[RMDB]
RNA sequence: GGGAACGACUCGAGUAGAGUCGAAAAUUCAUUUAAAUGAAUUGAAACAAAUUUAAUACAUGUGGAUGUAGGAUAACCGUCCGUCCUUUACAUUGGUAUAAAAGUGAUCUAAAAUUCUAUUUAUAAUUGCGCUCUCGCGUGUUCGCACGCGAGAGAACCGUAGUUAUAGUUUCGACUAUAACUACGGAAAAGAAACAACAACAACAAC
Reactivity to 2A3 in 0.01 (KOAc 150mM, MgCl2 10mM, bicine 150mM(pH8.5), 24C), signal-to-noise 1, nucleotides 027 to 156: u020u000c030a010u030u080u210a160a230a090u000g010a000a040u000u070g040a100a010a000c010a010a130a030u140u300u300a140a080u120a030c020a020u050g000u070g040g010a020u030g020u150a020g080g000a030u040a150a140c010c080g000u000c050c000g030u040c000c000u120u050u010a010c010a020u020u060g060g010u080a000u010a170a120a080a030g080u010g040a030u010c010u120a150a070a090a040u170u010c020u080a190u080u220u030a170u020a200a150u190u130g040c040g000c010u000c000u000c000g000c020g010u000g020u030u020c100g000c080a000c010g000c020g000a010g000a000g000a000a000